[RMDB]
RNA sequence: GGGAACGACUCGAGUAGAGUCGAAAAGCGUUUAUGAGCUACAUGAACGAAGAGCAUACUUAGUCAAAGUAUGCAGAAGCCUUCUGUAGCUCAGAGGGCAGGACUAAUCUAUGACUUAGAUUAGGGAACUCCUCAUACUAUUCGUAGUAUGAGGAGUAAAAGAAACAACAACAACAAC
Reactivity to 2A3 in 0.01 (KOAc 150mM, MgCl2 10mM, bicine 150mM(pH8.5), 24C), signal-to-noise 7, nucleotides 027 to 126: g020c070g060u030u030u060a210u050g010a000g010c000u010a010c010a030u240g010a020a000c060g030a050a020g020a010g050c000a010u010a000c010u040u050a040g120u160c050a120a040a010g000u010a000u000g010c010a000g040a060a010g020c000c000u000u000c000u000g010u000a000g010c000u000c000a000g000a000g000g040g010c030a030g060g090a020c010u010a000a010u000c000u010a030u150g240a210c070u040u040a000g000a010u000u010a000g020g010g020a020
Reactivity to DMS in 0.01 (KOAc 150mM, MgCl2 10mM, bicine 150mM(pH8.5), 24C), signal-to-noise 9, nucleotides 027 to 126: g010c050g010u000u010u000a100u010g010a010g010c010u000a010c000a020u010g010a010a010c100g010a040a040g010a300g000c000a000u000a000c000u000u000a130g010u040c300a080a050a010g010u000a000u000g010c000a030g010a150a120g000c040c060u000u000c000u000g010u000a020g000c010u000c000a000g000a050g010g000g010c020a110g010g010a090c010u000a010a000u000c000u000a010u010g000a130c280u010u000a000g000a010u000u000a010g000g000g010a140

Structure probing data (2A3 and DMS) for a 177-nucleotide construct. The RNA was probed in 150 mM KOAc, 10 mM MgCl2 and 150 mM bicine (pH 8.5) at 24 C.